[RMDB]
RNA sequence: GGGAACGACUCGAGUAGAGUCGAAAAGGAUGCUCGUUCGCGAGCAUCCACUGAGAUAGCCACUAUAAAGAUUAAGUCUUCCUACUCGAGACACGAUGUCUAUGCUCCUGGCCUUCGGGCCAGGAAACAUUCUUGCAGUGUUCGCACUGCAAGAAUGAAAAGAAACAACAACAACAAC
Reactivity to 2A3 in 0.01 (KOAc 150mM, MgCl2 10mM, bicine 150mM(pH8.5), 24C), signal-to-noise 4, nucleotides 027 to 126: g000g000a000u010g000c010u000c000g030u070u090c250g020c000g090a000g000c000a000u020c000c000a000c020u020g020a020g020a050u070a030g100c110c060a070c050u100a070u110a270a160a010g100a060u110u190a140a080g060u020c000u020u020c010c000u010a010c000u000c000g030a030g020a040c080a030c160g040a060u120g080u130c020u080a130u140g090c020u010c000c000u000g000g020c000c000u030u070c240g050g020g000c010c000a000g000g000a000a000a010
Reactivity to DMS in 0.01 (KOAc 150mM, MgCl2 10mM, bicine 150mM(pH8.5), 24C), signal-to-noise 3, nucleotides 027 to 126: g030g000a010u010g000c040u000c010g010u000u000c170g050c000g010a010g020c000a000u000c000c020a020c110u000g000a230g000a090u000a080g020c080c120a090c110u000a100u010a110a080a050g000a060u010u000a090a140g010u000c010u000u000c050c000u000a010c030u000c000g000a010g000a100c150a060c080g010a190u010g010u000c040u000a090u000g000c150u000c000c000u000g000g000c000c000u000u010c160g030g000g040c000c000a000g000g000a000a020a070